[RMDB]
RNA sequence: GGGAACGACUCGAGUAGAGUCGAAAAGCGGGGAGGUGGAGAUGCCAUGCCGACCCGAAGAGGAAAGAAGAACACGGACGCGAACCCGUAAGUGGAACCCUGAUCCUUUAUUGGGGGGUACACUCGAUAACGCUACACUUCGGUGUAGCGAAAAGAAACAACAACAACAAC
Reactivity to 2A3 in 0.01 (KOAc 150mM, MgCl2 10mM, bicine 150mM(pH8.5), 24C), signal-to-noise 6, nucleotides 027 to 129: g080c000g000g000g000g000a020g000g000u050g010g030a110g020a060u150g080c010c000a070u120g040c000c000g040a040c000c010c000g020a010a010g020a020g020g010a010a010a030g020a010a000g000a020a010c050a020c100g020g030a020c020g020c020g060a050a050c000c000c010g020u080a060a010g010u000g020g030a070a040c010c000c000u030g030a100u160c040c030u100u170u200a130u090u090g000g000g000g010g000g010u030a010c020a010c020u020c010g020a020u080a150a010
Reactivity to DMS in 0.01 (KOAc 150mM, MgCl2 10mM, bicine 150mM(pH8.5), 24C), signal-to-noise 6, nucleotides 027 to 129: g000c050g010g020g020g030a090g020g050u030g020g000a080g030a110u040g050c000c080a070u030g050c070c020g000a150c020c000c060g030a050a050g020a000g030g060a040a050a080g000a060a050g000a050a060c120a020c100g010g010a110c050g000c040g040a040a100c080c010c010g020u040a000a000g030u010g000g000a210a110c040c010c010u000g030a110u050c190c120u010u050u050a060u000u000g000g000g000g000g000g000u080a170c100a010c000u010c000g040a120u060a020a140